This 177-nucleotide RNA was probed chemically with 2A3 and DMS. It was measured as part of the RMDB libraries RFM100 and RFMREP. 2A3 adducts were read by reverse transcription with SuperScript II with manganese. For DMS the reverse transcriptase was MarathonRT. The 2A3 profile rests on 3,382 reads. The RNA was probed in 150 mM KOAc, 10 mM MgCl2 and 150 mM bicine (pH 8.5) at 24 C.
RNA sequence: GGGAACGACUCGAGUAGAGUCGAAAACUCGUGCAGGUAACUCACGAUGCUGGAACUUUGCGGCCCUAAGCACUGGAGAUGACCCUUGAGGGAGGUUUCACUCUGCAGAGAUCUCUCCCCCGUCGCGAUUAGACCUCUCAUUCGUGAGAGGUCUAAUAAAAGAAACAACAACAACAAC
Reactivity to 2A3 in 0.01 (KOAc 150mM, MgCl2 10mM, bicine 150mM(pH8.5), 24C), signal-to-noise 4, nucleotides 027 to 126: c010u020c010g050u050g010c070a000g020g050u090a060a050c010u000c030a030c040g050a090u060g020c030u060g050g060a080a060c030u060u070u160g030c010g010g010c000c000c030u060a090a020g000c010a030c050u040g060g020a060g030a090u120g070a110c000c040c020u040u100g080a180g010g040g000a030g030g000u000u020u060c030a030c030u050c030u030g010c000a000g010a020g020a090u000c010u000c010u000c000c000c000c010c020g110u080c050g010c010g030
Reactivity to DMS in 0.01 (KOAc 150mM, MgCl2 10mM, bicine 150mM(pH8.5), 24C), signal-to-noise 4, nucleotides 027 to 126: c050u010c010g020u010g010c120a030g020g000u040a080a120c040u010c000a060c070g010a050u020g010c050u000g000g000a070a080c070u010u010u040g020c090g010g000c020c030c030u020a090a050g030c030a050c080u010g010g000a050g000a140u010g000a150c140c010c020u010u010g010a160g010g000g000a030g030g000u020u000u000c020a060c030u010c030u000g000c050a100g000a070g000a090u000c040u000c010u000c020c000c000c020c040g010u010c090g000c120g000